[RMDB]
Chemical mapping of a 207-nucleotide RNA with DMS and 2A3. DMS (dimethyl sulfate) methylates the pairing face of unpaired adenines and cytosines. The 2A3 profile rests on 5,400 reads. It was measured as part of the RMDB library M2RFPK.
RNA sequence: GGGAACGACUCGAGUAGAGUCGAAAAUUGCGCCUCCGAUUCGACGUCGGCAUUUCCCCAGCAGCCAUGACCUACCAGGCUGCGGUGCGGCUCGCCGCACAGGUCAUCCCUCAUCGGGCGCGUCCUGGAUAGGGCUAUACUUUCGAGUAUAGCCCAACACUAUGGUUGUAUUCGUACAACCAUAGUGAAAAGAAACAACAACAACAAC
Reactivity to DMS in 0.01 (KOAc 150mM, MgCl2 10mM, bicine 150mM(pH8.5), 24C), signal-to-noise 2, nucleotides 027 to 156: u010u010g010c040g000c030c000u000c040c040g000a100u000u000c060g010a090c090g030u000c020g010g000c120a210u000u010u000c010c010c000c070a120g040c030a040g030c010c010a140u000g000a130c060c060u000a150c100c110a140g040g020c030u000g020c020g040g000u000g010c040g020g010c080u030c170g020c020c000g000c030a050c020a030g000g020u000c030a070u000c020c010c020u010c090a130u000c060g030g020g010c030g030c040g010u000c040c030u000g010g010a130u000a070g010g000g040c000u000a000u000a010c010u000u000u010c210g010a080g030u010a010u000a010g010c010c000c000a010a040
Reactivity to 2A3 in 0.01 (KOAc 150mM, MgCl2 10mM, bicine 150mM(pH8.5), 24C), signal-to-noise 5, nucleotides 027 to 156: u100u160g030c020g000c030c020u030c030c020g070a050u040u090c040g050a040c110g050u030c020g020g000c070a080u030u060u060c010c010c000c010a040g020c000a000g000c010c020a150u140g020a050c010c020u120a240c100c060a010g010g000c000u000g000c010g000g000u020g000c000g000g010c060u080c150g120c000c000g000c000a010c010a000g000g030u010c010a110u110c040c010c010u100c040a120u090c050g000g000g020c030g020c030g040u070c010c010u040g030g020a090u100a200g000g000g010c000u000a000u000a000c000u040u080u130c220g070a010g010u000a000u000a000g000c020c000c000a000a000